[RMDB]
RNA sequence: GGGAACGACUCGAGUAGAGUCGAAAAGAUAUGGAGUCCCAGGACAUGCGAGGUAUCGGAAACGAUACCAUUCGCAACAGCCUGUGACUCCUAAGUCAAAACUAGACUACGUUCGCGUAGUCUAGAACAUUCUCUACCGGUUCGCCGGUAGAGAAUGAAAAGAAACAACAACAACAAC
Reactivity to DMS in 0.01 (KOAc 150mM, MgCl2 10mM, bicine 150mM(pH8.5), 24C), signal-to-noise 3, nucleotides 027 to 126: g000a010u000a010u000g000g000a040g010u000c000c060c000a000g010g010a030c080a160u000g070c000g010a050g000g010u000a000u000c000g020g000a010a000a040c020g010a020u000a000c020c010a060u000u000c000g010c010a130a120c250a170g020c010c000u000g020u000g010a040c000u000c010c010u000a000a050g000u010c010a170a100a130a230c010u000a000g010a020c000u000a000c000g010u010u020c270g040c010g040u000a000g000u010c000u010a000g000a140a230
Reactivity to 2A3 in 0.01 (KOAc 150mM, MgCl2 10mM, bicine 150mM(pH8.5), 24C), signal-to-noise 2, nucleotides 027 to 126: g010a000u010a020u070g010g000a010g000u000c040c050c020a010g010g000a050c210a220u300g000c010g000a000g010g000u000a000u000c000g040g040a020a010a000c000g000a010u000a010c030c000a010u020u030c000g000c000a090a170c080a050g010c010c000u010g010u010g010a000c000u010c010c000u000a000a000g010u000c000a010a020a110a190c000u000a000g000a000c000u000a010c000g030u020u070c270g030c010g200u000a000g010u000c010u000a000g000a000a000
An RNA of 177 nucleotides, treated with DMS and 2A3 and read out base by base. It was measured as part of the RMDB library TTRDES. 2A3 adducts were read by reverse transcription with SuperScript II with manganese. The RNA was probed in 150 mM KOAc, 10 mM MgCl2 and 150 mM bicine (pH 8.5) at 24 C. For 2A3, 5,602 sequencing reads were counted.